[RMDB]
RNA sequence: GGGAACGACUCGAGUAGAGUCGAAAAGCAACAGAUAACUGGAUGCAGCGUAGGAUUCUACGCAUAUCCAGUACGAAUGGUACCUGUAAAGAAAAUAAGUGUGGAUGUACAAGUACCAACAUAUGGUUAAGCGAUGGUGAUGUCAAUCACAUUUGCAGGUACUACGCAGGUUCGCCUGCGUAGUACCAAAAGAAACAACAACAACAAC
Reactivity to 2A3 in 0.01 (KOAc 150mM, MgCl2 10mM, bicine 150mM(pH8.5), 24C), signal-to-noise 1, nucleotides 027 to 156: g060c000a000a040c050a000g100a050u250a190a000c000u000g030g000a030u050g100c170a060g000c060g000u010a010g170g250a300u270u090c000u000a000c000g000c010a000u000a010u150c000c000a000g030u000a000c010g000a010a010u080g000g010u010a010c010c000u020g040u030a060a160a070g210a070a060a030a170u150a020a060g100u110g120u000g040g020a080u030g000u100a100c040a050a070g120u050a000c000c000a030a010c000a000u070a070u010g080g010u050u000a030a000g010c020g020a000u060g090g110u020g040a040u000g110u030c000a050a010u030c000a030c000a000u000u000u140g000c000a000